[RMDB]
RNA sequence: GGGAACGACUCGAGUAGAGUCGAAAAGGGAUCCGGUAAACAAGACAUGCUGAUGGAUCAAGGCCGGUCCGAUUCGUGCGGUCAUCGGAGUCAGAGUUGCCGGGUCGAUUUCGCCGGAACGCACGCCCACUGCUGGUGGUUUCGACCACCAGCAGUGAAAAGAAACAACAACAACAAC
Reactivity to DMS in 0.01 (KOAc 150mM, MgCl2 10mM, bicine 150mM(pH8.5), 24C), signal-to-noise 1, nucleotides 027 to 126: g010g040g000a000u020c020c030g020g040u020a050a050a030c110a050a110g000a060c060a070u020g000c000u010g000a070u010g030g020a070u010c110a070a200g040g030c070c050g010g020u000c150c070g040a070u020u000c020g000u000g020c030g000g010u000c050a010u000c010g060g000a050g000u000c010a060g000a300g000u000u000g000c000c000g000g010g000u000c020g000a090u020u020u000c030g000c000c030g000g000a050a060c050g000c030a030c030g000c040c040
Reactivity to 2A3 in 0.01 (KOAc 150mM, MgCl2 10mM, bicine 150mM(pH8.5), 24C), signal-to-noise 3, nucleotides 027 to 126: g210g000g010a000u000c000c000g010g010u060a040a120a010c040a140a070g080a010c040a040u120g050c010u090g070a080u040g080g130a040u100c110a080a100g080g000c060c010g020g030u060c030c040g020a010u080u080c050g070u110g060c020g000g040u040c010a020u000c020g020g000a030g070u010c010a010g010a000g150u010u020g050c040c000g000g010g000u000c010g000a040u030u050u020c080g010c020c050g000g040a070a010c040g000c040a000c030g040c010c000
Source information
Structure probing data (DMS and 2A3) for a 177-nucleotide construct. Source: RMDB library OK1LIB, as collected in RNAgym. Reactivities are given for positions 27 through 126. For 2A3 the reverse transcriptase was SuperScript II with manganese.